[RMDB]
RNA sequence: GGGAACGACUCGAGUAGAGUCGAAAACAGUCACUUGCGGACCAUUCCGGUUAAGUCGCGAAGUCAUCCAGAAAAGCUGUGGACCACUCUGGUCAAGUUGAGAAGCGAUCCAGUAAAGCUGCGUACCUACUUGCCCAAUCUUCGGAUUGGGCAAGUAAAAAGAAACAACAACAACAAC
Reactivity to 2A3 in 0.01 (KOAc 150mM, MgCl2 10mM, bicine 150mM(pH8.5), 24C), signal-to-noise 2, nucleotides 027 to 126: c040a000g070u030c010a020c070u020u130g000c020g020g010a020c020c020a050u090u020c000c040g000g020u020u090a070a000g070u030c020g020c040g080a060a010g080u010c040a040u010c020c030a000g120a030a170a020a000g060c060u180g050u080g300g050a000c000c030a010c060u090c050u070g010g010u100c010a020a050g050u000u030g090a080g020a090a030g020c030g010a000u030c040c000a000g010u100a110a020a000g000c000u040g030c060g010u040a070c000c000
Reactivity to DMS in 0.01 (KOAc 150mM, MgCl2 10mM, bicine 150mM(pH8.5), 24C), signal-to-noise 2, nucleotides 027 to 126: c050a140g000u010c030a100c130u000u010g000c000g020g000a050c030c020a080u000u000c040c050g000g000u040u030a030a110g000u010c010g000c060g020a040a110g040u000c040a130u000c010c140a150g000a090a040a060a060g020c010u030g010u000g020g000a040c040c000a050c110u010c250u000g020g000u040c030a070a050g030u030u000g000a040g000a130a020g000c050g020a070u000c010c000a060g000u020a030a000a130g000c000u000g010c000g000u000a080c120c080
Chemical mapping of a 177-nucleotide RNA with 2A3 and DMS.
The RNA was probed in 150 mM KOAc, 10 mM MgCl2 and 150 mM bicine (pH 8.5) at 24 C.
Source: RMDB library OK1LIB, as collected in RNAgym.
For DMS the reverse transcriptase was MarathonRT.
2A3 adducts were read by reverse transcription with SuperScript II with manganese.
For DMS, 2,277 sequencing reads were counted.